Notes:
Chemical mapping of a 177-nucleotide RNA with 2A3. The RNA was probed in 150 mM KOAc, 10 mM MgCl2 and 150 mM bicine (pH 8.5) at 24 C.
[RMDB]
RNA sequence: GGGAACGACUCGAGUAGAGUCGAAAAGAUAUGGACGAUGAGUACGAGAUCCCGGUCGGAAACGACCGUGAGAUCGAUGAGUACCAUCGUCCUAAGUCAAACCUCCGUAUCUUCGGAUACGGAGGAACGAGGGGCAAUACUUCGGUAUUGCCCCUCGAAAAGAAACAACAACAACAAC
Reactivity to 2A3 in 0.01 (KOAc 150mM, MgCl2 10mM, bicine 150mM(pH8.5), 24C), signal-to-noise 1, nucleotides 027 to 126: g000a000u010a000u040g010g000a010c010g000a020u020g030a030g170u000a020c060g010a030g000a200u000c030c000c000g000g000u000c010g020g050a020a020a010c010g000a010c010c030g070u180g050a300g000a030u030c000g050a130u300g000a000g030u010a010c000c000a000u020c000g000u010c000c000u000a000a000g010u020c000a000a050a140c010c010u050c000c000g000u030a010u000c030u030u100c300g190g020a010u000a010c030g020g030a010g010g000a010a020